[RMDB]
This 170-nucleotide RNA was probed chemically with 2A3 and DMS. The 2A3 profile rests on 1,794 reads. Values cover nucleotides 27 to 129. The reactions ran in a buffer of 150 mM KOAc, 10 mM MgCl2 and 150 mM bicine (pH 8.5), at 24 C. 2A3 adducts were read by reverse transcription with SuperScript II with manganese. For DMS, 6,218 sequencing reads were counted.
RNA sequence: GGGAACGACUCGAGUAGAGUCGAAAAAUGUUGCCAACUUCCAAAAAUCAGGUUAUAGUAAAUAUGUCACUGUUCAGGGACCACCUGGCACUGGCAAAAGUCAUUUUGCUAUAGGGUUAGCGAUUUAUCAGCAGUGCGUUCGCGCACUGCAAAAGAAACAACAACAACAAC
Reactivity to 2A3 in 0.01 (KOAc 150mM, MgCl2 10mM, bicine 150mM(pH8.5), 24C), signal-to-noise 2, nucleotides 027 to 129: a000u010g000u010u000g020c030c000a000a010c000u090u060c080c000a000a000a000a100a000u060c010a010g070g040u060u000a000u000a030g040u000a020a000a020u020a020u060g000u050c010a000c000u000g010u170u280c090a050g050g030g270a300c160c050a210c000c030u040g050g040c010a000c030u000g000g000c000a080a080a000a000g040u040c030a080u040u000u000u000g000c020u000a020u030a040g030g000g000u020u010a000g000c000g050a080u000u060u000a120u000c000a000
Reactivity to DMS in 0.01 (KOAc 150mM, MgCl2 10mM, bicine 150mM(pH8.5), 24C), signal-to-noise 3, nucleotides 027 to 129: a020u050g050u000u000g000c110c020a120a110c080u030u010c020c050a040a070a050a040a050u000c070a160g000g000u000u060a020u000a090g000u040a000a110a030u010a120u010g020u020c010a070c030u000g020u030u010c030a070g020g000g090a230c120c260a140c030c000u080g020g020c040a020c130u020g000g000c020a000a070a020a130g030u030c210a060u130u000u000u000g000c040u020a000u000a030g000g000g000u020u000a100g000c110g000a050u000u000u000a170u000c100a070